[RMDB]
RNA sequence: GGGAACGACUCGAGUAGAGUCGAAAACGAUCUCCAGUGAAUCAAGGGGAUCUUACAGUCACGAUUACCGUUUGGCAAAAGACUGAUCCUUAGUAGAUCCAUACUGGAAAAACAGCCCCUUUAUUGGCCCUAAGCUUAAUUUCGAUUAAGCUUAGGGAAAAGAAACAACAACAACAAC
Reactivity to 2A3 in 0.01 (KOAc 150mM, MgCl2 10mM, bicine 150mM(pH8.5), 24C), signal-to-noise 7, nucleotides 027 to 126: c020g030a070u020c010u000c050c000a020g010u020g090a060a050u030c030a130a150g010g020g000g020a000u000c000u020u110a140c070a010g000u010c010a010c140g120a140u050u270a080c040c060g130u140u240u280g020g000c040a040a040a050a020g030a020c030u030g010a030u030c010c000u080u030a050g090u070a050g070a030u000c030c000a040u080a140c020u020g020g020a010a060a020a050a070c020a020g040c000c000c010c020u030u220u130a240u150u140g100g020
Reactivity to DMS in 0.01 (KOAc 150mM, MgCl2 10mM, bicine 150mM(pH8.5), 24C), signal-to-noise 7, nucleotides 027 to 126: c180g000a110u010c070u000c000c000a030g020u000g000a060a020u010c030a230a150g020g000g000g010a020u000c070u000u010a090c180a030g010u000c010a070c200g020a260u000u010a060c030c010g010u000u010u010g020g030c020a030a090a110a090g000a020c030u000g000a050u000c010c010u000u000a110g020u000a120g000a010u000c020c040a110u010a090c030u000g000g000a020a040a050a090a100c100a120g000c060c000c010c150u000u000u000a120u010u000g010g010